[RMDB]
RNA sequence: GGGAACGACUCGAGUAGAGUCGAAAAGCGCCGUAAUAUAUAUGCUAAUAUCGUACGCGGCGCGCAUGCAUUAAUAUGCAUGCGCAUAUAUGCAUAUAUGCUAGCUACGCGGCCGGCAUUACGUACGAGGGGAUUGUACAUUCGUGUACAAUCCCCUAAAAGAAACAACAACAACAAC
Reactivity to 2A3 in 0.01 (KOAc 150mM, MgCl2 10mM, bicine 150mM(pH8.5), 24C), signal-to-noise 1, nucleotides 027 to 126: g060c010g000c000c000g030u010a000a120u190a020u020a010u010a010u140g000c010u040a110a070u040a090u220c030g000u010a000c020g040c030g070g000c010g030c000g010c020a000u060g000c000a000u060u300a300a120u240a050u190g000c000a000u000g000c020g120c030a000u010a000u020a000u070g000c000a000u000a000u010a000u010g000c020u030a030g000c010u020a020c150g000c090g120g000c000c010g020g000c010a090u000u120a050c030g040u060a010c040g020
Reactivity to DMS in 0.01 (KOAc 150mM, MgCl2 10mM, bicine 150mM(pH8.5), 24C), signal-to-noise 1, nucleotides 027 to 126: g000c070g000c000c020g010u000a040a070u000a180u000a020u000a000u000g000c010u010a110a090u010a120u000c050g010u000a040c010g010c030g000g030c080g050c000g050c000a010u000g000c010a000u000u020a060a100u000a160u000g010c000a020u000g020c030g000c060a030u020a020u010a060u000g000c000a030u000a020u000a050u000g010c090u010a020g000c010u000a110c290g010c260g000g000c040c010g000g000c050a030u000u000a030c070g010u000a010c040g000

The record gives the reactivity of an RNA of 177 nucleotides to 2A3 and DMS. The DMS profile rests on 967 reads. It was measured as part of the RMDB library OK2TRN.